[RMDB]
RNA sequence: GGGAACGACUCGAGUAGAGUCGAAAAGCAGUUCCAGAGUCUGUGGACUCUGAAUACUAGCGGUCAGUCCUCGUCCACAGACGAGGUGAAGUGAUUAUGAGAAUGAUCACACUGACGACGUAUUCUCAUAUGUCCUAUCGCUAGGAACUGGAUAGGCUACUUUUAUUAUGUUCGCAUAAUAAAAGUAAAAAGAAACAACAACAACAAC
Reactivity to 2A3 in 0.01 (KOAc 150mM, MgCl2 10mM, bicine 150mM(pH8.5), 24C), signal-to-noise 9, nucleotides 027 to 156: g030c010a000g010u020u010c020c000a010g000a000g010u030c040u120g150u290g170g010a000c000u000c010u020g010a020a020u100a090c030u030a030g160c030g020g010u010c020a010g030u020c000c000u000c000g000u000c030c060a160c050a160g000a000c010g000a010g020g000u070g090a100a030g010u020g020a000u010u020a010u050g080a040g030a120a050u060g020a030u030c010a010c010a020c060u050g030a030c040g020a020c020g050u040a050u040u010c040u010c020a040u070a060u170g040u040c010c010u030a030u050c020g030c130u050a050g050g040a050a030c030u030g010g010a050u050a050g040g000c020
Reactivity to DMS in 0.01 (KOAc 150mM, MgCl2 10mM, bicine 150mM(pH8.5), 24C), signal-to-noise 6, nucleotides 027 to 156: g020c030a050g020u000u000c010c010a050g020a060g010u000c020u000g030u010g050g010a030c010u000c010u010g010a050a060u010a110c010u010a090g030c030g030g020u000c020a090g010u000c000c000u000c010g000u000c010c130a190c300a210g010a020c010g010a030g030g020u000g010a060a100g000u000g010a120u000u000a030u000g000a280g000a170a050u010g010a040u000c010a050c020a260c060u000g000a070c050g020a060c060g030u000a040u000u000c040u010c050a070u000a060u000g000u000c000c030u000a060u000c000g010c020u000a090g020g000a040a050c030u000g010g000a130u000a070g000g010c070
The record gives the reactivity of an RNA of 207 nucleotides to 2A3 and DMS. The RNA was probed in 150 mM KOAc, 10 mM MgCl2 and 150 mM bicine (pH 8.5) at 24 C. Values are in units of 0.01, from 0 to 300, in steps of 10. Values cover nucleotides 27 to 156. It was measured as part of the RMDB library OK3TST.